The record gives the reactivity of an RNA of 177 nucleotides to DMS and 2A3. For 2A3 the reverse transcriptase was SuperScript II with manganese. The RNA was probed in 150 mM KOAc, 10 mM MgCl2 and 150 mM bicine (pH 8.5) at 24 C. The DMS profile rests on 2,471 reads.

RNA sequence: GGGAACGACUCGAGUAGAGUCGAAAAGAGGCUGAGGCGGGAGGAUCACCUGAGCCUGGGAGGUUGAGGCUGCAGUGAGCUGUGAUCACACCACUGCACUCCAGCCUGGGUAAUAGAGCGAGACUCCAUCCACGCAGUGGUUCGCCACUGCGUGGAUAAAAGAAACAACAACAACAAC
Reactivity to DMS in 0.01 (KOAc 150mM, MgCl2 10mM, bicine 150mM(pH8.5), 24C), signal-to-noise 2, nucleotides 027 to 126: g010a070g010g000c010u000g000a030g000g020c060g000g020g000a100g030g000a110u000c030a080c040c030u000g000a270g000c040c000u000g010g000g000a040g020g000u050u000g030a080g010g030c160u000g010c000a040g010u000g000a070g030c130u000g000u000g000a120u050c180a110c020a020c020c020a020c000u000g000c040a040c040u000c010c010a030g000c020c030u020g000g000g000u030a020a140u050a080g000a050g000c100g010a100g010a200c030u010c010c000
Reactivity to 2A3 in 0.01 (KOAc 150mM, MgCl2 10mM, bicine 150mM(pH8.5), 24C), signal-to-noise 3, nucleotides 027 to 126: g030a000g000g030c080u140g040a000g010g060c040g040g020g000a010g050g010a030u060c000a030c030c010u050g080a010g040c000c000u000g060g010g020a050g030g040u050u060g000a020g070g030c140u040g020c010a000g000u020g030a090g010c190u000g020u060g140a210u270c110a010c000a000c030c010a000c000u000g020c000a000c000u000c010c010a000g010c020c000u000g030g000g000u050a070a080u060a140g070a020g030c030g020a030g010a050c000u000c000c000